[RMDB]
Notes
This 207-nucleotide RNA was probed chemically with DMS and 2A3. For 2A3 the reverse transcriptase was SuperScript II with manganese. The DMS profile rests on 2,996 reads. The reactions ran in a buffer of 150 mM KOAc, 10 mM MgCl2 and 150 mM bicine (pH 8.5), at 24 C. The 2A3 profile rests on 1,345 reads. Reactivities are rounded to 0.1 and cut off at 0 and 3.
RNA sequence: GGGAACGACUCGAGUAGAGUCGAAAAUAAUGAUAACUCUGCCCAUGAUGUGUUUAUGGCUUGCUAGAUCCAUUCUGACCCACCUAUUGUGAAGAGUUCAUGGAGAGCUCUUAACAACAAGUGAGGCUGAGGCUGGCAGAUUAAAUGCAGUUCAAAAUAAUCAAAAUUAUUUCGAUAAUUUUGAUUAAAAAGAAACAACAACAACAAC
Reactivity to DMS in 0.01 (KOAc 150mM, MgCl2 10mM, bicine 150mM(pH8.5), 24C), signal-to-noise 2, nucleotides 027 to 156: u000a120a130u010g000a210u000a060a120c090u000c020u000g000c010c000c010a180u000g020a110u000g030u000g020u000u000u010a030u020g010g010c110u000u000g020c030u000a050g000a100u000c020c040a240u010u000c030u000g000a050c000c000c010a050c010c010u000a050u000u010g030u000g000a050a070g010a060g000u000u000c000a220u000g000g030a300g030a030g000c000u000c010u020u000a040a010c000a000a010c040a010a030g000u000g010a050g020g030c000u000g010a100g010g010c000u000g000g000c040a020g000a250u000u000a020a050a050u000g010c000a050g020u010u000c030a070a090a050a230
Reactivity to 2A3 in 0.01 (KOAc 150mM, MgCl2 10mM, bicine 150mM(pH8.5), 24C), signal-to-noise 3, nucleotides 027 to 156: u090a010a110u100g080a050u090a250a100c070u090c050u170g050c000c020c030a030u100g030a060u040g040u020g020u010u030u000a080u090g170g070c120u110u090g010c000u030a030g010a130u070c050c020a120u060u130c070u060g280a300c000c000c000a020c010c000u070a040u020u030g000u000g020a020a020g010a010g000u000u000c050a050u220g250g120a100g010a000g090c000u000c000u010u030a040a030c000a000a000c020a040a000g000u010g010a090g070g000c000u010g020a000g020g030c020u020g000g020c010a000g010a030u010u030a020a020a020u010g030c000a040g040u060u130c090a080a060a120a040